An RNA of 170 nucleotides, treated with DMS and 2A3 and read out base by base. 2A3 adducts were read by reverse transcription with SuperScript II with manganese. DMS adducts were read by reverse transcription with MarathonRT. For DMS, 14,387 sequencing reads were counted.

RNA sequence: GGGAACGACUCGAGUAGAGUCGAAAAAUGUUGGUGAUAGUGCGGAAGUUGCAGUUAAAAUGUUUAAAAAAAACUUUUAACGUACCAAUGGAAAAACUCAAAACACUAGUUGCAUCUGCAGAAGCUGUUAAGUACCACUUCGGUGGUACUAAAAGAAACAACAACAACAAC
Reactivity to DMS in 0.01 (KOAc 150mM, MgCl2 10mM, bicine 150mM(pH8.5), 24C), signal-to-noise 5, nucleotides 027 to 129: a120u050g000u000u050g010g040u020g010a150u000a000g030u000g060c070g030g050a090a030g040u010u040g010c000a130g010u000u000a020a000a000a010u110g010u010u010u090a010a010a020a050a080a010a000a010c030u080u000u000u000a020a010c000g040u030a050c280c100a070a060u060g020g080a100a020a110a040a030c000u040c120a060a030a040a040c060a050c040u020a050g020u040u030g020c050a060u000c030u000g000c080a030g010a040a060g020c070u030g000u070u020a070
Reactivity to 2A3 in 0.01 (KOAc 150mM, MgCl2 10mM, bicine 150mM(pH8.5), 24C), signal-to-noise 3, nucleotides 027 to 129: a000u160g000u040u140g090g000u000g010a040u010a060g080u060g020c080g010g020a110a040g000u040u090g000c030a040g000u000u030a030a000a030a020u170g020u020u050u150a160a070a030a030a000a000a000a000c030u000u000u000u000a020a040c010g010u060a050c000c060a030a100u120g090g000a040a010a100a000a000c010u070c080a010a090a000a000c060a030c030u040a060g040u060u020g030c060a000u040c020u100g000c020a000g010a060a000g020c040u110g070u070u020a040